[RMDB]
RNA sequence: GGGAACGACUCGAGUAGAGUCGAAAAUGUUGAGAAAGAAUAGAAAGGCCUAGCUCUGGGAUAAGGCCAAACUAGAAAAUGAUCAGCCCUCACAAAGUCUGAAUCCCUAAUUAAAGGUCAUCUGAGGCCAGGCGCAGGGGCUCACACCUGUAAUCCAGUCCCUAAAUCAGUUCGCUGAUUUAGGGACAAAAGAAACAACAACAACAAC
Reactivity to 2A3 in 0.01 (KOAc 150mM, MgCl2 10mM, bicine 150mM(pH8.5), 24C), signal-to-noise 1, nucleotides 027 to 156: u050g050u030u030g040a050g020a060a160a000g010a060a030u040a130g010a090a210a050g050g000c000c020u080a050g020c030u050c120u260g240g000g020a070u080a170a000g000g000c060c000a000a100a000c010u020a020g050a020a170a080a120u080g010a030u110c020a000g010c030c040c000u010c000a090c050a040a100a000g020u010c000u010g040a050a110u040c000c010c010u000a050a080u090u120a180a110a000g040g000u090c020a050u000c200u030g040a020g060g010c000c080a030g010g000c000g020c020a030g000g000g010g110c020u110c000a010c000a000c020c000u040g070u220a000a100u130c000c010a000